RNA sequence: GGGAACGACUCGAGUAGAGUCGAAAAGCACAGUGCUUCUCCUGCUGCGCUGAUCUCAGCCGUAGAGCGUCCUGUGCCUUAUGUUGGUGCUGGUGAUGCUGGGGGCGGUGGACUGCUGCACAGCACACCCCGUAUUACCCUUCGGGGUAAUACGGGGAAAAGAAACAACAACAACAAC
Reactivity to DMS in 0.01 (KOAc 150mM, MgCl2 10mM, bicine 150mM(pH8.5), 24C), signal-to-noise 3, nucleotides 027 to 126: g010c020a100c070a040g010u000g000c040u010u000c040u000c030c020u000g000c010u000g000c160g020c080u010g000a120u020c110u010c020a090g040c040c060g040u000a070g000a050g040c300g000u020c110c010u030g020u010g000c010c040u000u000a090u010g010u000u000g000g010u000g010c030u000g020g010u010g020a110u010g020c010u010g020g000g000g030g020c040g020g050u000g000g010a100c100u020g010c030u000g020c080a050c040a020g000c040a070c120a170
Reactivity to 2A3 in 0.01 (KOAc 150mM, MgCl2 10mM, bicine 150mM(pH8.5), 24C), signal-to-noise 4, nucleotides 027 to 126: g030c020a030c050a080g070u040g050c020u130u080c010u000c020c000u010g010c020u040g000c050g050c090u110g130a280u130c060u010c040a010g000c010c000g040u030a020g000a000g080c000g020u040c010c020u000g000u010g010c010c000u250u200a210u220g200u110u110g030g010u010g010c030u040g030g050u090g040a090u030g040c020u070g000g080g020g050g000c040g000g030u080g030g090a060c050u070g010c040u060g020c030a030c000a060g020c000a000c000a010
Annotation: Structure probing data (DMS and 2A3) for a 177-nucleotide construct. 2A3 adducts were read by reverse transcription with SuperScript II with manganese. The data come from the RNA Mapping Database (RMDB), library OK2TST. Conditions: 150 mM KOAc, 10 mM MgCl2 and 150 mM bicine (pH 8.5), 24 C. The 2A3 profile rests on 4,131 reads.